[RMDB]
RNA sequence: GGGAACGACUCGAGUAGAGUCGAAAAACAAGCAUUAGUACGAUAGGCUAUUGGCGAUGACAUAGCAAGUUAUUCAUGAAAGUGAAACAUCUGUGCUAUCAUGGAGUGUGCUGACGACGAGAGAUGAGCUCAGAAAUCAAUUCGUUGAUUUCUGAGCAAAAGAAACAACAACAACAAC
Reactivity to DMS in 0.01 (KOAc 150mM, MgCl2 10mM, bicine 150mM(pH8.5), 24C), signal-to-noise 4, nucleotides 027 to 126: a100c110a080a070g000c050a050u010u000a050g010u000a040c090g000a100u010a080g020g020c050u010a070u010u010g020g020c020g010a070u000g010a060c130a070u000a020g020c040a050a040g000u010u010a080u000u000c000a020u000g000a040a080a090g010u010g010a050a040a100c110a030u000c040u010g000u000g020c010u000a030u000c050a040u010g000g000a070g000u000g010u010g020c030u000g000a090c080g000a080c080g010a090g010a060g010a110u000g000a180
Reactivity to 2A3 in 0.01 (KOAc 150mM, MgCl2 10mM, bicine 150mM(pH8.5), 24C), signal-to-noise 3, nucleotides 027 to 126: a010c070a040a010g010c020a060u040u060a060g040u100a050c020g070a090u060a080g080g000c020u020a050u080u130g080g000c060g120a110u050g010a020c020a040u030a000g000c000a020a000g030u110u070a070u080u000c030a000u040g030a090a020a020g050u050g040a010a020a060c040a040u040c020u090g180u070g050c010u020a020u070c020a060u060g030g010a060g040u070g000u020g000c000u020g020a030c030g020a000c030g030a020g000a010g010a120u100g050a030
Background:
Chemical mapping of a 177-nucleotide RNA with DMS and 2A3. For 2A3, 3,874 sequencing reads were counted. The data come from the RNA Mapping Database (RMDB), library OK2TST. The RNA was probed in 150 mM KOAc, 10 mM MgCl2 and 150 mM bicine (pH 8.5) at 24 C. For DMS, 4,606 sequencing reads were counted.